RNA sequence: GGGAACGACUCGAGUAGAGUCGAAAAGAUAUGGAUUGGCUACCCACCGUGAGCUAAGACAGUUACUCGGAAACGAGUAAUCGAGCUCCGAGGCCAAUCCUAAGUCAAACGGUCGUUCGCGACCGAACAAUGAGUCUAGGUUCGCCUAGACUCAUUGAAAAGAAACAACAACAACAAC
Reactivity to DMS in 0.01 (KOAc 150mM, MgCl2 10mM, bicine 150mM(pH8.5), 24C), signal-to-noise 7, nucleotides 027 to 126: g010a100u010a130u000g010g000a030u000u000g000g020c000u010a150c040c030c030a300c150c030g000u000g020a010g000c010u010a170a100g010a060c300a090g000u000u000a010c000u000c000g010g000a080a070a120c010g000a010g000u000a010a000u000c040g010a020g010c000u000c000c020g000a090g000g000c000c010a010a000u000c000c000u010a010a050g010u010c120a090a110a210c010g000g010u000c010g020u010u010c210g010c030g020a010c010c010g000a060a090
Reactivity to 2A3 in 0.01 (KOAc 150mM, MgCl2 10mM, bicine 150mM(pH8.5), 24C), signal-to-noise 4, nucleotides 027 to 126: g060a030u150a120u270g010g000a010u000u010g010g020c040u100a290c030c010c060a050c040c030g110u300g010a010g000c030u110a240a040g080a060c050a030g030u010u000a010c000u000c010g000g000a040a050a030c000g000a010g000u020a000a000u070c000g020a000g000c010u000c030c060g030a040g000g000c000c000a000a010u010c000c000u020a020a000g080u050c090a120a060a090c030g030g010u000c000g030u090u130c290g010c010g130a020c000c010g020a030a010